This 177-nucleotide RNA was probed chemically with 2A3 and DMS.
RNA sequence: GGGAACGACUCGAGUAGAGUCGAAAACACGGGGGUCCCAGUGGAUCCGUGGGAUGCUCCUCCCGAUUCCGAUAUCCCUUCCCCCGAGAGGUCCCCCAGGAAUGGCGGGACCCCACUCUACAGGGUCCUAACUACAUAAGUUCGCUUAUGUAGUUAGAAAAGAAACAACAACAACAAC
Reactivity to 2A3 in 0.01 (KOAc 150mM, MgCl2 10mM, bicine 150mM(pH8.5), 24C), signal-to-noise 3, nucleotides 027 to 126: c070a030c030g020g000g000g000g010u030c030c010c010a010g050u080g040g020a020u010c020c030g030u040g000g000g010a030u090g170c040u030c000c000u010c010c000c010g020a050u140u070c060c060g070a080u040a150u200c020c000c010u030u080c030c000c000c000c010g010a020g000a000g010g010u010c000c010c000c010c000a010g040g070a080a020u030g010g010c070g030g000g000a000c000c000c000c010a010c000u030c010u050a040c030a050g000g020g000u000c010
Reactivity to DMS in 0.01 (KOAc 150mM, MgCl2 10mM, bicine 150mM(pH8.5), 24C), signal-to-noise 7, nucleotides 027 to 126: c140a100c130g000g000g000g000g010u000c010c010c020a070g010u010g020g010a010u000c030c060g020u000g010g000g000a080u010g020c070u000c050c030u000c020c000c010g010a180u000u010c060c050g000a120u010a080u000c020c010c010u000u000c010c000c000c050c060g000a050g000a080g010g000u000c000c000c000c000c000a020g010g040a130a110u000g000g000c160g020g010g010a010c000c000c020c070a050c060u000c050u010a080c070a170g010g040g000u000c020
For DMS the reverse transcriptase was MarathonRT. High 2A3 reactivity points to a flexible backbone, as in loops and unpaired stretches. The RNA was probed in 150 mM KOAc, 10 mM MgCl2 and 150 mM bicine (pH 8.5) at 24 C. It was measured as part of the RMDB library 15KREP.